[RMDB]
RNA sequence: GGGAACGACUCGAGUAGAGUCGAAAACAGCCAAAAUGACCACCAAGCUGCCUAAAGUGCUAAGAACACCUCUCCAAGUUUGGCUACUGAGUAGAGUCACCUGCACUAUGAGAGUCCUUUCCAAUAGGUUCGCCCUCCUCUUCGGAGGAGGGCGAACAAAAGAAACAACAACAACAAC
Reactivity to 2A3 in 0.01 (KOAc 150mM, MgCl2 10mM, bicine 150mM(pH8.5), 24C), signal-to-noise 1, nucleotides 027 to 126: c000a000g010c030c000a000a160a050a000u200g010a080c000c000a000c010c030a040a000g060c000u020g000c000c000u130a120a000a000g050u100g060c060u000a020a030g030a210a000c000a000c080c010u000c000u120c050c000a040a050g090u010u040u140g010g000c000u020a020c000u030g080a130g000u230a050g050a020g000u080c080a060c050c000u000g000c020a000c070u070a000u140g060a150g000a000g060u120c000c000u000u000u060c020c000a060a150u140a110g050

Description
Conditions: 150 mM KOAc, 10 mM MgCl2 and 150 mM bicine (pH 8.5), 24 C. This 177-nucleotide RNA was probed chemically with 2A3. It was measured as part of the RMDB library OK1LIB.